[RMDB]
RNA sequence: GGGAACGACUCGAGUAGAGUCGAAAAAACGUGGGUUUUGAUUUCGGUACCACUUUCAGUACCCUAUGUGUAGGGUUCGAUGGUUCUGACGCUGCGUAUCUUGAUGCAGAUGCUGAGAUAUUUAUACUAGCUAUGUGAAGUUCGCUUCACAUAGCUAAAAAGAAACAACAACAACAAC
Reactivity to 2A3 in 0.01 (KOAc 150mM, MgCl2 10mM, bicine 150mM(pH8.5), 24C), signal-to-noise 2, nucleotides 027 to 126: a010a000c050g010u060g000g040g010u040u090u140u130g090a120u030u030u110c020g000g020u040a020c000c000a050c070u010u090u050c050a030g000u040a030c020c000c000u020a030u110g300u060g130u090a030g000g030g000u020u030c020g020a030u040g010g010u070u000c020u050g020a030c050g010c070u010g030c010g030u030a050u050c040u090u160g120a220u170g000c020a020g030a300u130g060c000u070g020a060g030a060u030a120u080u250u090a170u060a090c050
Reactivity to DMS in 0.01 (KOAc 150mM, MgCl2 10mM, bicine 150mM(pH8.5), 24C), signal-to-noise 3, nucleotides 027 to 126: a050a030c080g010u000g010g010g010u010u000u000u000g000a100u000u000u000c020g010g020u010a060c020c040a040c130u010u000u000c100a140g020u010a020c000c000c010u000a040u010g020u020g040u000a010g010g000g010u000u000c050g000a100u000g020g010u000u000c050u000g020a080c170g000c020u000g010c040g020u010a060u010c130u010u010g010a070u010g010c020a070g000a080u010g010c020u000g000a060g000a040u000a060u010u010u010a100u000a160c190
Record summary:
The data come from the RNA Mapping Database (RMDB), library OK2TST. An RNA of 177 nucleotides, treated with 2A3 and DMS and read out base by base. For DMS, 4,714 sequencing reads were counted. DMS adducts were read by reverse transcription with MarathonRT.